Structure probing data (DMS and 2A3) for a 177-nucleotide construct. It was measured as part of the RMDB library TTRDEL. For DMS, 3,825 sequencing reads were counted.
RNA sequence: GGGAACGACUCGAGUAGAGUCGAAAAGAUAUGGAUGAUAGGGAGAAGGUGGUCGGAAACGACCAUACUUCUUUGAUCUAUAUCCUAAGUCAAAAGGCGCAUAGUUAGUUCGCUAACUAUGCGCCAACUACCUUACUUGGUUCGCCAAGUAAGGUAGAAAAGAAACAACAACAACAAC
Reactivity to DMS in 0.01 (KOAc 150mM, MgCl2 10mM, bicine 150mM(pH8.5), 24C), signal-to-noise 3, nucleotides 027 to 126: g000a030u010a200u010g010g000a010u000g000a130u010a060g010g000g000a010g020a020a000g010g030u000g010g000u000c000g020g010a070a110a160c020g000a030c000c010a000u000a030c010u000u010c000u000u000u000g000a080u020c000u000a020u010a060u000c000c010u020a060a150g000u000c060a070a070a110a100g000g010c010g000c000a020u000a000g010u000u000a010g020u000u000c280g010c000u010a000a010c000u000a000u000g000c000g020c000c000a000a020
Reactivity to 2A3 in 0.01 (KOAc 150mM, MgCl2 10mM, bicine 150mM(pH8.5), 24C), signal-to-noise 1, nucleotides 027 to 126: g020a020u100a030u090g020g000a000u150g070a040u140a060g100g040g000a030g010a010a010g000g020u000g000g030u000c000g000g070a100a020a000c000g000a000c000c040a030u030a100c010u000u000c010u060u020u010g010a000u010c000u000a000u000a010u010c000c000u050a120a040g080u010c050a030a030a070a200g020g000c030g000c020a000u000a000g010u000u000a010g000u030u100c300g000c200u000a010a000c000u000a010u000g000c000g000c000c010a000a000